[RMDB]
Background:
An RNA of 207 nucleotides, treated with DMS and 2A3 and read out base by base. Source: RMDB library M2RFPK, as collected in RNAgym. The DMS profile rests on 3,081 reads. Conditions: 150 mM KOAc, 10 mM MgCl2 and 150 mM bicine (pH 8.5), 24 C. High 2A3 reactivity points to a flexible backbone, as in loops and unpaired stretches.
RNA sequence: GGGAACGACUCGAGUAGAGUCGAAAAGUAUUCAUUCUCCUUUCUCGAUAGAGAUUGGAGUCAUACAACCCCAGAAACCAUUCCUUAUACCUUGAGUAUUGCUGAAUUCAGUUUAGCGCGCAUGCUCUUAAUGGGUGCACCUUCGGGUGCACCCAAACAACAAGUAGAGAUUCGUCUCUACUUGUUGAAAAGAAACAACAACAACAAC
Reactivity to DMS in 0.01 (KOAc 150mM, MgCl2 10mM, bicine 150mM(pH8.5), 24C), signal-to-noise 2, nucleotides 027 to 156: g000u000a020u000u010c050a120u000u000c010u000c000c000u000u000u000c010u000c030g000a300u000a150g000a000g000a020u000u000g020g010a020g020u010c300a050u000a030c030a080a230c040c010c030c070a190g000a140a080a100c080c030a140u010u000c000c060u010u000a130u000a060c030c020u010u010g020a150g020u000a060u000u000g010c050u010g010a060a080u000u000c100a080g020u000u000u000a040g000c030g010c140g000c030a050u000g030c010u000c030u000u010a100a130u010g020g050g040u000g020c000a000c030c010u000u000c300g050g060g050u000g000c020a000c010c000c010a000a000a070
Reactivity to 2A3 in 0.01 (KOAc 150mM, MgCl2 10mM, bicine 150mM(pH8.5), 24C), signal-to-noise 4, nucleotides 027 to 156: g010u020a010u050u200c070a030u110u020c010u000c000c000u010u010u000c010u010c010g220a300u120a300g000a000g000a000u000u000g000g000a000g000u000c000a010u030a010c020a010a090c030c000c010c000a030g110a070a080a020c050c010a080u070u180c030c060u170u130a080u080a300c020c050u070u080g020a010g020u020a060u180u150g000c030u020g060a150a130u130u150c070a090g080u050u080u100a040g010c040g000c000g000c030a000u010g020c010u010c000u060u140a180a090u060g000g010g010u000g010c020a000c000c010u040u100c240g120g000g000u000g000c000a000c000c000c000a010a000a000